Structure probing data (2A3 and DMS) for a 170-nucleotide construct. 2A3 adducts were read by reverse transcription with SuperScript II with manganese. Conditions: 150 mM KOAc, 10 mM MgCl2 and 150 mM bicine (pH 8.5), 24 C. For 2A3, 4,078 sequencing reads were counted. For DMS, 4,102 sequencing reads were counted.

[RMDB]
RNA sequence: GGGAACGACUCGAGUAGAGUCGAAAAGGCAUCUAGGUGUUACUAAAGGCAUAUUGACAGGCUGUUUUAGUUUUGCCAAGAUGUUAUUUAUGCUUCCACUAGCUUACUUUAGUGAUUCAAAACUCGGAAAGAUCCGGCUUCGGCCGGAUCAAAAGAAACAACAACAACAAC
Reactivity to 2A3 in 0.01 (KOAc 150mM, MgCl2 10mM, bicine 150mM(pH8.5), 24C), signal-to-noise 3, nucleotides 027 to 129: g000g000c000a000u000c000u030a080g000g000u020g000u050u080a000c000u000a000a000a000g040g000c010a000u070a080u250u200g160a030c030a100g140g040c000u050g060u070u020u000u030a020g000u010u000u060u050g000c000c000a010a000g000a000u010g000u010u000a120u030u080u020a090u060g070c000u060u040c040c010a000c060u000a010g060c030u080u080a080c020u150u230u040a080g030u020g050a050u050u050c040a020a110a060a050c010u090c010g020g010a060a150a040
Reactivity to DMS in 0.01 (KOAc 150mM, MgCl2 10mM, bicine 150mM(pH8.5), 24C), signal-to-noise 2, nucleotides 027 to 129: g040g000c000a000u070c030u020a070g100g030u060g020u000u000a000c050u000a000a020a030g050g190c220a110u000a200u060u110g010a070c210a160g010g010c030u000g040u070u040u000u000a010g010u000u000u000u000g040c000c010a100a040g000a130u040g070u000u030a040u000u000u000a020u010g000c070u060u040c100c000a080c050u000a020g000c070u030u050a070c110u020u070u030a070g040u040g020a130u000u060c070a060a050a070a090c100u000c060g070g000a050a020a030